[RMDB]
RNA sequence: GGGAACGACUCGAGUAGAGUCGAAAAGGACAUGAUGCUCCGCCGCCCAUAUAUCCCGCUAUGUAUAUCCUGUGUGCGCUCUAGUUCCGUUGGGACCCUGAAGAGUAAGCACACUAAACCAUGCAUUGAAUGUGAAUCCAUUCGUGGAUUCACAUUCAAAAGAAACAACAACAACAAC
Reactivity to 2A3 in 0.01 (KOAc 150mM, MgCl2 10mM, bicine 150mM(pH8.5), 24C), signal-to-noise 5, nucleotides 027 to 126: g030g020a020c020a050u180g030a070u130g080c030u010c030c010g060c020c010g010c000c010c010a050u090a010u000a020u070c020c010c010g000c040u050a030u130g100u040a060u020a060u160c030c080u030g000u000g000u010g000c020g010c010u000c000u010a030g010u020u010c040c040g120u140u250g030g000g010a030c010c060c030u090g090a110a040g010a010g010u030a130a030g020c000a000c000a000c010u000a000a000a000c030c010a050u120g010c020a040u010u060
Reactivity to DMS in 0.01 (KOAc 150mM, MgCl2 10mM, bicine 150mM(pH8.5), 24C), signal-to-noise 1, nucleotides 027 to 126: g000g010a180c050a020u030g000a020u070g000c020u010c010c050g000c070c050g000c000c000c000a130u030a070u060a050u000c010c000c000g000c040u000a060u000g000u000a000u030a000u000c110c060u000g020u000g060u000g040c000g000c000u000c000u000a100g000u000u000c010c020g030u010u010g050g020g040a010c040c280c230u070g010a130a020g010a050g000u010a040a100g050c010a000c000a000c080u000a020a070a070c080c070a140u060g000c070a100u000u050